[RMDB]
RNA sequence: GGGAACGACUCGAGUAGAGUCGAAAAGAUAUGGACCGGCUACUUUUGACGUCAAGUCGGAAACGACGUAUGACGAUAAGUAGCGGUCCUAAGUCAAAAGUGUCAUAAAGUUCGCUUUAUGACACAACCUGAAAACGUUGUUCGCAACGUUUUCAGGAAAAGAAACAACAACAACAAC
Reactivity to DMS in 0.01 (KOAc 150mM, MgCl2 10mM, bicine 150mM(pH8.5), 24C), signal-to-noise 2, nucleotides 027 to 126: g020a040u010a300u000g000g000a000c000c000g010g020c000u000a000c000u000u000u000u000g030a200c030g010u010c010a050a170g010u000c000g010g000a060a060a120c000g000a000c000g000u030a190u000g010a010c000g040a120u000a000a010g030u000a000g010c000g010g000u000c000c010u000a000a110g010u000c030a070a080a110a140g020u000g000u010c000a010u000a000a010a000g000u000u000c270g000c000u000u000u000a010u000g000a000c000a010c000a000a060
Reactivity to 2A3 in 0.01 (KOAc 150mM, MgCl2 10mM, bicine 150mM(pH8.5), 24C), signal-to-noise 3, nucleotides 027 to 126: g010a020u050a020u090g010g000a000c030c010g300g220c050u010a000c010u120u210u250u300g300a050c010g000u000c010a030a110g000u000c010g030g000a070a030a010c030g000a000c050g180u190a300u280g000a000c020g080a100u110a150a000g000u010a010g000c020g000g010u000c000c000u000a000a030g010u010c010a000a000a060a220g000u010g000u030c010a020u000a020a000a040g020u070u090c160g120c090u000u000u000a010u000g020a000c010a000c000a000a020